RNA sequence: GGGAACGACUCGAGUAGAGUCGAAAACUCUCAUCAGAAACAAAUUUGCUGGCAUCUUGAUCAUGGACUCCUAGACUCCAGAACUAUGAUAAAAUAAACUUGUGUUGCUUAAGGCAUGCAAGAUGUGGCAUUAUGUUAUAGCGUCCUGAGCAGACAACGGACCUAUUUUAUUCGUAAAAUAGGUCCGAAAAGAAACAACAACAACAAC
Reactivity to DMS in 0.01 (KOAc 150mM, MgCl2 10mM, bicine 150mM(pH8.5), 24C), signal-to-noise 2, nucleotides 027 to 156: c040u000c010u000c030a090u030c080a150g020a170a130a120c030a090a140a140u010u000u000g010c010u000g010g000c050a040u010c030u020u000g020a090u010c020a100u070g040g030a100c030u000c000c040u000a120g020a080c010u010c000c050a060g000a210a110c050u000a040u010g010a070u000a080a090a040a200u010a090a090a110c020u000u000g000u010g020u000u010g020c020u010u000a080a180g030g030c030a060u010g040c010a020a040g040a090u010g000u010g010g010c050a100u000u010a070u020g010u000u000a050u010a070g000c060g040u030c040c010u020g000a090g040c020a070g010a050c010a060a120
Reactivity to 2A3 in 0.01 (KOAc 150mM, MgCl2 10mM, bicine 150mM(pH8.5), 24C), signal-to-noise 5, nucleotides 027 to 156: c010u000c000u000c020a080u030c030a060g150a120a110a040c040a020a120a070u060u060u050g020c030u070g150g030c010a020u020c020u040u020g030a060u150c020a060u060g040g030a070c010u030c030c010u030a030g040a070c000u020c030c020a030g040a110a090c080u100a050u190g070a090u200a100a120a050a050u160a050a100a010c010u030u010g020u010g020u090u060g030c030u090u090a050a010g040g000c020a000u020g000c000a010a000g000a020u030g010u020g020g000c000a010u010u050a040u070g030u040u050a110u070a130g090c040g040u010c010c000u030g030a010g050c030a010g040a050c020a080a010